[RMDB]
Source: RMDB library OK2TST, as collected in RNAgym. This 177-nucleotide RNA was probed chemically with DMS and 2A3.

RNA sequence: GGGAACGACUCGAGUAGAGUCGAAAAUUCACCCGCAUCUAUUCGGGCAAGCUGACCAAGGGCGUUUCGCUUGAAAACACCGUCAAGGGCAAGCGUGAGCGUAUCGGCCGUAUGUUGCAGAUGCACACAUAUCGUACCGUUUCGACGGUACGAUAUGAAAAGAAACAACAACAACAAC
Reactivity to DMS in 0.01 (KOAc 150mM, MgCl2 10mM, bicine 150mM(pH8.5), 24C), signal-to-noise 7, nucleotides 027 to 126: u000u000c170a150c020c000c060g010c080a060u000c030u000a180u000u010c130g010g010g000c040a040a190g020c050u000g020a050c040c040a110a120g020g020g010c030g010u000u000u000c030g010c020u000u000g000a060a040a050a090c270a110c030c020g010u000c220a110a140g000g000g000c010a030a030g010c030g020u010g010a050g000c020g010u000a090u010c070g000g020c030c040g020u000a050u010g010u000u000g020c040a070g000a070u000g010c030a090c180a180
Reactivity to 2A3 in 0.01 (KOAc 150mM, MgCl2 10mM, bicine 150mM(pH8.5), 24C), signal-to-noise 6, nucleotides 027 to 126: u060u050c060a110c040c000c010g000c010a030u010c020u090a140u100u190c080g050g040g000c050a060a050g050c030u050g050a150c040c010a110a090g100g080g000c020g000u020u030u040c020g000c000u020u010g020a060a080a070a050c090a080c020c030g150u260c140a130a140g020g000g000c010a000a010g000c010g030u090g020a010g000c010g010u040a110u150c030g020g010c010c010g100u120a090u130g100u070u050g020c020a020g010a060u040g010c020a010c000a000
The reactions ran in a buffer of 150 mM KOAc, 10 mM MgCl2 and 150 mM bicine (pH 8.5), at 24 C. 2A3 adducts were read by reverse transcription with SuperScript II with manganese. The DMS profile rests on 9,907 reads.